[RMDB]
RNA sequence: GGGAACGACUCGAGUAGAGUCGAAAACGGAUAACAGUGAGUUUCAAAGUAGGAAAGUAACGAGGCCCACGUCAUAGCAUCGCUCACUCAUUUUACGAUCAAUAUGACACCUUCUCAUUAAGUGAAACUAUCGUAGGUGAUUCGUCACCUACGAUAGAAAAGAAACAACAACAACAAC
Reactivity to DMS in 0.01 (KOAc 150mM, MgCl2 10mM, bicine 150mM(pH8.5), 24C), signal-to-noise 5, nucleotides 027 to 126: c050g000g000a100u020a050a120c180a070g000u010g000a070g000u010u000u000c040a060a080a080g010u020a060g000g010a050a100a030g020u010a060a070c070g020a080g020g000c070c010c020a050c080g000u010c040a050u000a050g020c120a060u000c020g000c110u010c050a050c050u020c060a090u020u010u010u030a070c100g000a040u000c080a080a070u030a020u000g000a060c060a120c090c030u000u030c050u010c020a100u040u040a060a040g020u050g000a110a080a100
Reactivity to 2A3 in 0.01 (KOAc 150mM, MgCl2 10mM, bicine 150mM(pH8.5), 24C), signal-to-noise 8, nucleotides 027 to 126: c020g030g020a080u090a090a030c030a040g050u030g050a030g020u040u070u060c130a130a100a020g040u060a100g050g150a150a050a040g080u120a070a040c040g010a020g010g030c000c000c000a010c030g020u010c010a030u030a040g020c010a020u030c000g020c040u040c020a060c020u070c060a130u050u130u090u140a060c040g020a030u030c020a100a080u060a030u100g020a020c010a030c020c010u100u040c030u010c030a080u120u140a130a030g090u040g150a060a010a030